[RMDB]
RNA sequence: GGGAACGACUCGAGUAGAGUCGAAAACUGCCCACACCAGAGAAGGGAGGCUGUCUAAUUUGGAGACUGCAGACCAUCCAACAAAAGAGAGAGUAUUCCUCUCAAUCCUUACUUCUCUCUCGCUUCAAGGGCUCACUGGCUUGAGACAACAAAGACACUUUUAUAAUGGGUUCGCCCAUUAUAAAAGAAAAGAAACAACAACAACAAC
Reactivity to DMS in 0.01 (KOAc 150mM, MgCl2 10mM, bicine 150mM(pH8.5), 24C), signal-to-noise 1, nucleotides 027 to 156: c060u000g000c000c000c010a160c180a080c100c040a070g000a120g000a100a020g020g010g050a210g090g000c070u020g040u000c030u000a050a180u000u000u000g060g000a120g010a300c090u000g000c080a070g010a100c010c030a220u000c010c060a030a150c090a090a030a090a070g020a070g010a030g040a040g010u000a110u000u010c030c000u010c060u010c050a000a060u000c020c010u000u010a090c010u020u000c010u000c010u010c020u000c020g000c050u010u010c050a090a140g000g010g030c000u000c010a070c080u020g010g000c000u000u010g010a130g010a090c030a060a090c030a030a090a100g000a200c030a140
Reactivity to 2A3 in 0.01 (KOAc 150mM, MgCl2 10mM, bicine 150mM(pH8.5), 24C), signal-to-noise 4, nucleotides 027 to 156: c050u090g010c000c000c000a060c020a040c020c050a040g030a000g010a110a070g010g010g010a010g010g000c050u030g020u000c050u070a140a210u150u120u170g070g010a040g020a050c060u070g070c080a010g040a100c000c030a090u030c020c010a040a060c020a070a210a090a000g040a000g000a000g000a000g030u060a130u100u120c020c010u020c020u050c040a010a090u060c010c000u040u060a060c040u120u030c000u000c000u000c010u030c030g040c030u040u080c050a060a080g040g000g000c010u050c040a080c060u040g040g000c000u000u070g040a020g030a040c050a090a000c020a050a190a050g050a030c050a020